Chemical mapping of a 170-nucleotide RNA with DMS and 2A3. It was measured as part of the RMDB library 15KLIB. 2A3 is a SHAPE reagent: it acylates the 2'-hydroxyl of flexible nucleotides of all four kinds. For 2A3, 5,285 sequencing reads were counted.

RNA sequence: GGGAACGACUCGAGUAGAGUCGAAAACAGACAAUUUGACUGCUGAUGAAACAAAGGCGCUUAAAGAGUUAUAUGGCCCCGUUGAUCCUACUUUCUUACACAGAUUCUAUUCACUUAAGGCUGCAGUACGGUUUCCGGUUCGCCGGAAACAAAAGAAACAACAACAACAAC
Reactivity to DMS in 0.01 (KOAc 150mM, MgCl2 10mM, bicine 150mM(pH8.5), 24C), signal-to-noise 5, nucleotides 027 to 129: c060a100g040a110c080a040a120u040u020u030g010a080c020u010g000c040u040g010a170u000g020a100a120a100c190a120a130a180g000g030c000g000c180u000u000a060a060a080g030a230g010u000u000a000u040a120u000g000g000c040c020c000c030g030u030u040g020a000u000c030c060u050a110c110u000u040u030c040u000u000a100c120a100c100a070g000a060u010u050c020u000a000u030u020c110a070c100u010u010a020a010g040g000c000u000g030c070a020g040u040a030c040g000
Reactivity to 2A3 in 0.01 (KOAc 150mM, MgCl2 10mM, bicine 150mM(pH8.5), 24C), signal-to-noise 5, nucleotides 027 to 129: c040a010g240a070c050a080a120u110u100u150g060a030c050u040g010c000u030g040a080u100g040a140a070a060c070a010a030a020g020g000c040g000c080u030u040a020a170a040g130a000g000u150u080a100u020a040u220g040g000c010c000c000c000g010u010u020g030a050u020c000c000u000a100c020u070u160u030c020u040u060a040c040a010c050a130g000a070u080u020c020u040a080u020u070c040a080c200u060u030a020a030g030g000c010u020g000c000a020g000u030a080c030g000